[RMDB]
RNA sequence: GGGAACGACUCGAGUAGAGUCGAAAAGAUAUGGAAUCGGUAGAACUACAACCGAAGGUCGGAAACGAUGUUGACGGUUGCUACGCGAUUCCUAAGUCAAAGGUUAACCCCUUCGGGGGUUAACCAAUCCAACGUAAAGGUUCGCCUUUACGUUGGAAAAAGAAACAACAACAACAAC
Reactivity to 2A3 in 0.01 (KOAc 150mM, MgCl2 10mM, bicine 150mM(pH8.5), 24C), signal-to-noise 2, nucleotides 027 to 126: g010a000u070a030u160g000g000a000a000u000c010g000g020u020a010g020a150a160c200u230a070c300a030a010c000c000g040a040a010g150g010u020c030g000g030a030a020a060c030g010a030u050g230u300u060g230a120c040g030g000u010u080g070c000u000a000c060g280c000g250a000u000u000c010c000u000a040a000g010u010c060a110a060a040g000g000u010u010a000a000c000c020c060c000u010u170c260g110g000g000g000g000u000u000a000a000c010c000a000a000
Reactivity to DMS in 0.01 (KOAc 150mM, MgCl2 10mM, bicine 150mM(pH8.5), 24C), signal-to-noise 2, nucleotides 027 to 126: g000a060u000a300u000g000g010a010a000u000c000g010g030u010a000g020a110a090c070u020a300c040a010a000c000c000g020a300a040g030g010u000c010g000g010a050a070a160c020g000a030u000g000u000u010g010a300c050g000g000u010u010g020c000u000a010c030g040c000g010a000u000u000c000c000u000a020a070g000u000c040a060a080a150g000g000u010u000a000a010c000c000c000c000u000u010c160g010g000g000g000g000u020u000a000a000c000c000a000a010

The data come from the RNA Mapping Database (RMDB), library TTRDEL.
Chemical mapping of a 177-nucleotide RNA with 2A3 and DMS.
For DMS the reverse transcriptase was MarathonRT.
For DMS, 1,717 sequencing reads were counted.
The reactions ran in a buffer of 150 mM KOAc, 10 mM MgCl2 and 150 mM bicine (pH 8.5), at 24 C.
The 2A3 profile rests on 2,556 reads.